RNA sequence: GGGAACGACUCGAGUAGAGUCGAAAACUGUAUUCUAAUUAACGCAAGUGCAGUAUUGAUAUAAUCUGAGGUGCUACAUUGUUCUUUUAUUGGCUAUUGUGAUGUUGCUGCAUUGUGAGUAUCACAGGACAACAAGAAUCUUCGGAUUCUUGUUGUCAAAAGAAACAACAACAACAAC
Reactivity to DMS in 0.01 (KOAc 150mM, MgCl2 10mM, bicine 150mM(pH8.5), 24C), signal-to-noise 3, nucleotides 027 to 126: c020u010g020u020a020u020u010c060u000a060a100u040u040a050a110c160g000c100a060a060g000u010g010c000a010g000u010a090u010u030g010a080u000a040u040a050a040u020c060u010g010a110g010g000u030g020c020u030a080c060a080u000u010g000u010u000c040u000u010u030u010a020u000u020g000g020c100u000a040u020u000g010u020g010a060u010g010u000u000g000c010u010g020c070a050u020u010g010u000g000a110g030u010a050u010c060a100c110a090g000
Reactivity to 2A3 in 0.01 (KOAc 150mM, MgCl2 10mM, bicine 150mM(pH8.5), 24C), signal-to-noise 7, nucleotides 027 to 126: c020u030g050u110a110u110u140c120u180a150a210u170u190a160a060c040g000c060a050a050g110u050g020c010a010g010u100a110u100u190g120a070u040a030u050a210a110u080c060u070g100a060g050g070u080g030c020u000a050c020a110u060u080g060u180u080c050u070u100u070u090a140u120u110g030g010c040u030a090u160u070g060u070g060a060u050g010u080u070g000c020u000g020c000a040u020u020g010u010g040a040g070u060a040u170c030a010c020a050g090